[RMDB]
RNA sequence: GGGAACGACUCGAGUAGAGUCGAAAAGUAUUUACGCUGGGCCAUAGAACUUCCACCACUCCUAUGAAGUCCUGAAGCGCGCACGGGAUGGAGGAGUGUGUGGAAUCCCUAUGGCCUGUGCUGAAGCGCGCACGGCAACCGAAAGGUGCGAUGAGAACAGAUGUCGAUAGUUCGCUAUCGACAUCUGAAAAGAAACAACAACAACAAC
Reactivity to 2A3 in 0.01 (KOAc 150mM, MgCl2 10mM, bicine 150mM(pH8.5), 24C), signal-to-noise 1, nucleotides 027 to 156: g040u010a140u140u300u120a070c040g000c000u020g020g000g000c000c000a000u000a000g090a120a040c040u000u000c000c000a000c010c010a030c010u030c020c010u230a300u300g010a000a010g030u000c000c000u030g050a190a000g010c000g000c000g000c000a000c010g020g010g000a010u020g000g020a010g000g000a000g000u020g000u030g020u000g030g000a000a000u000c000c000c010u010a020u020g000g010c000c000u000g000u000g000c000u010g030a090a070g000c000g000c000g000c000a010c010g010g010c000a000a000c010c010g040a070a070a020g010g000u000g000c030g020a080u210g060a030g020a070a040